The data come from the RNA Mapping Database (RMDB), library OK2TST. Chemical mapping of a 177-nucleotide RNA with 2A3 and DMS. DMS adducts were read by reverse transcription with MarathonRT. As a SHAPE reagent, 2A3 marks flexible, mostly unpaired nucleotides at the ribose 2'-OH. 2A3 adducts were read by reverse transcription with SuperScript II with manganese. The reactions ran in a buffer of 150 mM KOAc, 10 mM MgCl2 and 150 mM bicine (pH 8.5), at 24 C. Reactivities are given for positions 27 through 126.

RNA sequence: GGGAACGACUCGAGUAGAGUCGAAAACUAAAGAAGCUUGGUGUUGUCAACACAGAUGAAAGAAUGGGGAAAACUUACUGUCAGGAACUGCUAAACACGGUUGAAGGACUAACAGAAAAGCAGAAGGUCAUGGACAACAUUUCGAUGUUGUCCAUGAAAAAGAAACAACAACAACAAC
Reactivity to 2A3 in 0.01 (KOAc 150mM, MgCl2 10mM, bicine 150mM(pH8.5), 24C), signal-to-noise 1, nucleotides 027 to 126: c020u050a060a130a090g140a130a020g020c040u070u050g040g030u120g050u040u080g020u010c010a020a000c020a010c020a010g090a200u100g150a010a020a090g060a020a090u130g010g060g000g000a000a040a070a070c030u060u040a050c020u010g010u010c000a010g020g030a080a070c050u020g000c000u090a070a060a060c020a020c050g070g030u010u020g040a040a040g020g000a030c000u010a050a000c000a020g100a030a020a000a010g060c050a000g020a080a000g090g010
Reactivity to DMS in 0.01 (KOAc 150mM, MgCl2 10mM, bicine 150mM(pH8.5), 24C), signal-to-noise 3, nucleotides 027 to 126: c020u000a060a140a150g000a160a090g000c100u000u000g010g020u000g010u000u000g000u000c060a070a070c060a060c060a070g010a080u000g010a080a040a060g020a090a030u000g000g020g020g000a120a060a090a040c070u010u000a100c100u010g010u000c040a060g000g000a040a070c030u000g000c030u010a110a040a120c190a160c040g000g000u010u030g000a080a090g000g000a050c060u000a000a100c070a110g000a080a030a040a040g010c040a080g020a070a090g000g000